Conditions: 150 mM KOAc, 10 mM MgCl2 and 150 mM bicine (pH 8.5), 24 C.
The record gives the reactivity of an RNA of 177 nucleotides to 2A3 and DMS.
DMS adducts were read by reverse transcription with MarathonRT.
The 2A3 profile rests on 9,938 reads.
RNA sequence: GGGAACGACUCGAGUAGAGUCGAAAAGAGUAGUAGUUCGCUACUACUCAAAGGCACAAAAGGCAGAGUUCUAAAGUGCAUGGAACACGCCAAGUGCCCGUGAAAGUAAAUCCUUCGGGAUUUACAACAUAAUUGAAGGGUUCGCCCUUCAAUUAUGAAAAGAAACAACAACAACAAC
Reactivity to 2A3 in 0.01 (KOAc 150mM, MgCl2 10mM, bicine 150mM(pH8.5), 24C), signal-to-noise 5, nucleotides 027 to 126: g000a000g000u000a000g000u000a010g000u000u050c200g010c110u000a000c000u000a000c000u000c000a010a020a000g010g000c020a020c010a020a190a040a050g010g000c060a040g060a030g150u020u010c020u080a130a130a140g270u210g170c040a040u110g000g000a000a000c030a010c040g000c010c000a050a070g000u000g000c000c010c000g110u120g160a130a030a000g000u000a000a000a000u000c010c000u010u070c180g060g000g000a000u000u000u010a000c000a000a010
Reactivity to DMS in 0.01 (KOAc 150mM, MgCl2 10mM, bicine 150mM(pH8.5), 24C), signal-to-noise 7, nucleotides 027 to 126: g010a010g000u000a000g000u000a010g000u000u020c240g020c000u000a010c000u000a000c000u010c000a030a070a070g010g000c000a010c010a070a070a140a160g010g010c000a080g020a110g020u000u000c010u010a040a100a140g020u010g020c220a080u010g010g000a010a010c000a110c060g000c010c000a060a300g010u000g010c000c000c080g010u010g010a100a110a130g000u000a000a010a000u000c000c000u000u010c220g040g010g010a010u000u000u000a000c000a090a190